[RMDB]
Chemical mapping of a 177-nucleotide RNA with DMS and 2A3. 2A3 is a SHAPE reagent: it acylates the 2'-hydroxyl of flexible nucleotides of all four kinds. The reactions ran in a buffer of 150 mM KOAc, 10 mM MgCl2 and 150 mM bicine (pH 8.5), at 24 C. The 2A3 profile rests on 5,388 reads. It was measured as part of the RMDB library VIROID. The DMS profile rests on 5,635 reads.
RNA sequence: GGGAACGACUCGAGUAGAGUCGAAAAACGGUGGGGAGUGCCCAGCGGCCGACAGGAGUAAUUCCCGCCGAAACAGGGUUUUCACCCUUCCUUUCUUCGGGUGUCCUUCCUCGCGCCCGCAGGACCAGACUAUACAAAUGUUCGCAUUUGUAUAGUCAAAAGAAACAACAACAACAAC
Reactivity to DMS in 0.01 (KOAc 150mM, MgCl2 10mM, bicine 150mM(pH8.5), 24C), signal-to-noise 3, nucleotides 027 to 126: a100c070g010g020u000g010g020g000g000a070g030u010g000c010c020c010a100g020c040g000g000c040c010g010a050c120a060g000g000a030g000u010a050a070u000u000c010c000c010g010c040c040g000a010a020a050c160a040g000g010g010u000u000u000u000c150a080c000c000c000u000u000c020c010u000u000u000c000u000u000c000g000g000g020u010g000u000c030c040u000u000c020c030u000c050g000c090g000c040c000c020g010c060a030g020g000a060c130c090a130
Reactivity to 2A3 in 0.01 (KOAc 150mM, MgCl2 10mM, bicine 150mM(pH8.5), 24C), signal-to-noise 3, nucleotides 027 to 126: a010c030g020g020u070g010g030g000g000a050g030u060g010c020c010c010a010g030c040g050g050c040c040g050a050c090a080g020g050a110g050u050a050a020u070u020c010c000c000g030c010c000g030a010a000a030c240a020g020g000g000u060u080u230u300c130a060c000c000c000u030u030c000c000u000u050u030c000u030u020c010g020g000g000u010g020u010c000c040u040u020c000c010u020c010g000c000g000c030c000c000g030c030a020g020g050a010c040c020a030